[RMDB]
RNA sequence: GGGAACGACUCGAGUAGAGUCGAAAAGAUAUGGAUUACUGUCACGAGCAACAGCUCGGAAACGAGACAUGCUCUGACGUAAUCCUAAGUCAAAAGUGCUUACAAAACUUCGGUUUUGUAAGCACAACAGCAUCCUAAUCUUCGGAUUAGGAUGCUGAAAAGAAACAACAACAACAAC
Reactivity to DMS in 0.01 (KOAc 150mM, MgCl2 10mM, bicine 150mM(pH8.5), 24C), signal-to-noise 2, nucleotides 027 to 126: g000a050u020a300u040g010g020a000u000u000a010c020u000g030u010c000a020c290g010a000g000c000a000a140c250a150g010c000u000c000g000g000a040a070a250c010g000a010g000a030c070a170u000g000c000u010c000u020g010a020c000g000u010a000a020u000c000c000u020a020a060g010u000c070a020a110a140a100g020u000g010c000u030u000a000c030a000a000a000a000c000u000u010c230g000g000u000u000u000u000g010u000a020a020g000c000a000c000a030a080
Reactivity to 2A3 in 0.01 (KOAc 150mM, MgCl2 10mM, bicine 150mM(pH8.5), 24C), signal-to-noise 1, nucleotides 027 to 126: g030a000u070a030u170g030g000a000u000u030a040c120u300g010u040c000a010c240g000a000g000c010a020a170c050a140g080c000u010c000g030g030a020a020a010c010g000a000g020a030c040a070u080g000c010u020c030u030g000a000c000g020u000a000a000u020c000c000u000a000a040g060u010c040a050a010a040a200g020u010g010c000u010u030a000c000a000a000a000a000c010u060u150c230g080g000u000u000u000u000g000u000a040a000g000c000a010c000a000a000
An RNA of 177 nucleotides, treated with DMS and 2A3 and read out base by base. The DMS profile rests on 1,194 reads. The reactions ran in a buffer of 150 mM KOAc, 10 mM MgCl2 and 150 mM bicine (pH 8.5), at 24 C.